RNA sequence: GGGAACGACUCGAGUAGAGUCGAAAAGUGGCAGGCACAGCGUGAGGCUGGCUUCACAGAGCAGCGACAACUGCCCGCUUCCAACGGUGGAAGGAUAAUGGGCCGCUGCACUCCUAGGACCAAUUGGAACUAUGAUCUACUUCGGUAGAUCAUAGUUAAAAGAAACAACAACAACAAC
Reactivity to DMS in 0.01 (KOAc 150mM, MgCl2 10mM, bicine 150mM(pH8.5), 24C), signal-to-noise 9, nucleotides 027 to 126: g020u000g000g010c200a060g010g020c030a080c030a030g010c020g020u020g020a130g020g020c010u010g010g010c020u000u000c050a050c060a090g010a110g010c010a010g010c010g010a130c180a090a140c250u020g000c010c010c010g010c010u000u000c000c000a070a190c290g010g030u010g010g000a030a010g010g040a060u000a040a060u030g000g000g000c020c030g000c010u000g000c010a080c070u000c020c010u000a080g000g010a110c060c060a110a130u010u010g010g010
Reactivity to 2A3 in 0.01 (KOAc 150mM, MgCl2 10mM, bicine 150mM(pH8.5), 24C), signal-to-noise 9, nucleotides 027 to 126: g030u030g010g050c090a030g030g000c050a050c020a300g040c030g070u190g120a070g270g000c010u010g000g000c000u040u030c010a030c010a010g070a010g010c000a000g000c000g040a030c070a160a040c090u060g000c000c000c000g020c000u000u000c000c020a160a150c190g190g130u130g040g010a010a020g010g030a060u090a140a090u200g000g000g000c010c010g000c000u010g010c000a020c010u020c000c020u040a070g030g080a070c020c030a050a180u100u140g050g010